This 177-nucleotide RNA was probed chemically with 2A3 and DMS. For 2A3 the reverse transcriptase was SuperScript II with manganese.
RNA sequence: GGGAACGACUCGAGUAGAGUCGAAAACAGUCCAUGCUGACAAGUGCGCCGUCGGCACGAGAAGCAGCGAUGGAAUUCGUAAAUGAACGUCUCAAACCUGAAAUCAUGGGGGAUUAUCAGCAGGGCCUAGGCCGUCUUAGUUCGCUAAGACGGCCUAAAAAGAAACAACAACAACAAC
Reactivity to 2A3 in 0.01 (KOAc 150mM, MgCl2 10mM, bicine 150mM(pH8.5), 24C), signal-to-noise 1, nucleotides 027 to 126: c040a020g020u080c000c000a010u010g000c000u010g000a130c010a180a120g000u000g000c040g060c090c000g000u090c160g070g000c000a000c000g120a050g040a180a020g080c120a000g020c010g070a000u020g000g070a040a070u050u080c030g020u070a000a000a060u210g040a060a030c020g080u020c010u000c020a050a110a070c030c020u090g020a110a080a020u100c040a120u180g000g000g000g000g060a010u040u020a030u090c030a000g000c000a010g000g020g020c000c000
Reactivity to DMS in 0.01 (KOAc 150mM, MgCl2 10mM, bicine 150mM(pH8.5), 24C), signal-to-noise 1, nucleotides 027 to 126: c110a170g000u060c000c040a030u000g030c000u000g000a130c110a070a100g030u000g000c010g050c160c020g020u000c140g030g010c030a010c040g000a000g060a160a010g110c020a060g000c010g000a100u000g000g000a090a040u000u000c040g130u000a090a110a050u040g000a080a040c100g000u000c010u000c000a030a100a180c170c000u000g000a000a060a040u040c210a060u030g000g000g000g000g000a170u060u000a010u010c000a120g000c100a040g000g000g000c070c060